RNA sequence: GGGAACGACUCGAGUAGAGUCGAAAACGCAUGUGUACUCGGGACGGUGCGGCUUCGUUGGUUCGGGUCUGUCGCGGUUGGUGAUGUCUGACGCGUCAGGGCGUGUUCAGGCAGGUUUAUGAGUGCAGGAGCAUGUUUCGUUCGCGGAACAUGCUCCAAAAGAAACAACAACAACAAC
Reactivity to DMS in 0.01 (KOAc 150mM, MgCl2 10mM, bicine 150mM(pH8.5), 24C), signal-to-noise 1, nucleotides 027 to 126: c110g030c080a080u020g000u030g020u000a080c020u000c050g010g000g040a060c060g000g040u010g030c050g000g000c060u000u000c060g040u010u010g000g020u040u000c080g000g020g000u030c030u020g000u040c030g000c010g010g040u010u010g010g060u010g000a140u000g000u010c020u000g000a010c020g020c030g030u000c040a130g020g000g000c010g030u010g000u040u020c040a020g000g020c000a080g000g010u010u000u020a110u000g010a110g000u000g010c060a050
Reactivity to 2A3 in 0.01 (KOAc 150mM, MgCl2 10mM, bicine 150mM(pH8.5), 24C), signal-to-noise 2, nucleotides 027 to 126: c100g030c020a070u140g060u050g000u120a020c000u020c040g030g060g070a020c010g020g010u040g020c020g010g000c010u110u040c010g070u030u050g020g040u000u090c030g000g090g000u000c050u080g070u020c020g020c010g060g040u040u050g050g020u070g020a110u030g020u020c010u000g000a000c020g010c000g010u080c020a060g070g170g000c020g020u000g070u090u070c000a000g010g000c010a000g000g030u090u030u020a100u140g040a040g070u030g000c000a040